This 177-nucleotide RNA was probed chemically with DMS and 2A3. For 2A3 the reverse transcriptase was SuperScript II with manganese. Reactivities are given for positions 27 through 126. For DMS the reverse transcriptase was MarathonRT. The 2A3 profile rests on 67,908 reads.
RNA sequence: GGGAACGACUCGAGUAGAGUCGAAAAGGAUGACACUAGUGGGCUAGCAGAGGGCCUCGUUGGCGAUCGCGAGCCUAGUAUGACGGAGCGCCGAUAGAGGGGUGGCAUCAAUGCUGUACACAGGCUGACAUGUAUGGUCGUUCGCGAUCAUGCAUGUAAAAGAAACAACAACAACAAC
Reactivity to DMS in 0.01 (KOAc 150mM, MgCl2 10mM, bicine 150mM(pH8.5), 24C), signal-to-noise 9, nucleotides 027 to 126: g000g010a050u010g010a070c060a060c050u010a080g020u010g010g000g000c030u010a070g010c050a080g010a130g000g010g010c020c010u000c130g010u020u020g010g010c030g000a070u010c060g000c050g000a080g010c040c030u010a070g010u020a060u030g010a100c080g000g000a070g010c040g010c020c020g010a050u010a070g010a070g010g000g000g020u010g000g000c040a050u010c070a060a100u010g010c020u000g010u010a070c090a070c110a080g000g000c030u000g000
Reactivity to 2A3 in 0.01 (KOAc 150mM, MgCl2 10mM, bicine 150mM(pH8.5), 24C), signal-to-noise 9, nucleotides 027 to 126: g070g010a060u100g030a020c020a010c090u060a050g070u090g040g030g010c020u030a040g020c050a030g010a030g020g050g010c000c010u030c030g060u040u100g020g000c030g030a040u050c050g020c030g170a030g020c000c010u030a030g040u060a070u150g060a030c040g020g010a030g020c020g000c000c020g040a030u070a080g060a050g000g020g010g020u060g040g000c000a020u050c020a030a070u110g010c020u030g020u060a030c060a010c010a050g050g000c020u030g020

For DMS, 137,370 sequencing reads were counted.